[RMDB]
RNA sequence: GGGAACGACUCGAGUAGAGUCGAAAAAAUUAGAGGCAAUUUGAAAUAAUUUAAAUGAGCUCAACCCUACUGCACUUACCGAACUAGAUAACGGUGUAGUAGGGGUAAAUUCUCCGCAUUCGGUGCGCAACCACCUGAGGUUUCGACCUCAGGUGAACUUAGUCGUCAUGUUCGCAUGACGACUAAGAAAAGAAACAACAACAACAAC
Reactivity to 2A3 in 0.01 (KOAc 150mM, MgCl2 10mM, bicine 150mM(pH8.5), 24C), signal-to-noise 1, nucleotides 027 to 156: a000a000u240u090a090g000a070g000g040c000a010a000u020u010u070g080a120a100a040u200a080a240u120u130u060a030a060a010u090g000a030g010c000u000c020a000a000c000c000c000u010a000c000u000g000c000a000c000u040u060a050c030c000g050a150a030c050u090a150g060a120u070a250a000c120g000g000u000g000u000a000g000u000a000g000g000g000g000u000a000a020a000u020u000c050u000c010c000g010c010a080u070u110c060g030g000u060g000c000g000c010a020a100c020c000a020c000c000u000g000a000g030g040u080u050u100c200g080a050c000c000u000c010a000g000g000u000g000a030a000